[RMDB]
RNA sequence: GGGAACGACUCGAGUAGAGUCGAAAAAGCUGCUACGGCAGCAAUUUCGCGUUGGGUUUGCGCGCCAUAAUGCCGUUACCCACCGCGUGCAGCAGGUGAGUUUUACCCAGACCGGUGCCGCCAUAAAGCCUCAUCAGCGUUUCGACGCUGAUGAGGCAAAAGAAACAACAACAACAAC
Reactivity to 2A3 in 0.01 (KOAc 150mM, MgCl2 10mM, bicine 150mM(pH8.5), 24C), signal-to-noise 1, nucleotides 027 to 126: a000g000c000u000g000c000u000a000c260g110g010c000a000g000c000a000a050u180u080u050c030g050c000g060u130u050g000g020g000u000u070u300g010c000g000c000g130c040c000a010u110a190a070u290g000c000c000g100u100u040a040c080c080c000a010c000c010g000c000g020u020g000c000a040g060c020a000g000g070u090g070a130g030u000u030u020u230a030c000c000c000a000g080a000c050c000g000g000u000g030c020c000g000c000c010a030u100a080a080a000
Background: Conditions: 150 mM KOAc, 10 mM MgCl2 and 150 mM bicine (pH 8.5), 24 C. An RNA of 177 nucleotides, treated with 2A3 and read out base by base. It was measured as part of the RMDB library RFM100. For 2A3 the reverse transcriptase was SuperScript II with manganese. Reactivities are given for positions 27 through 126.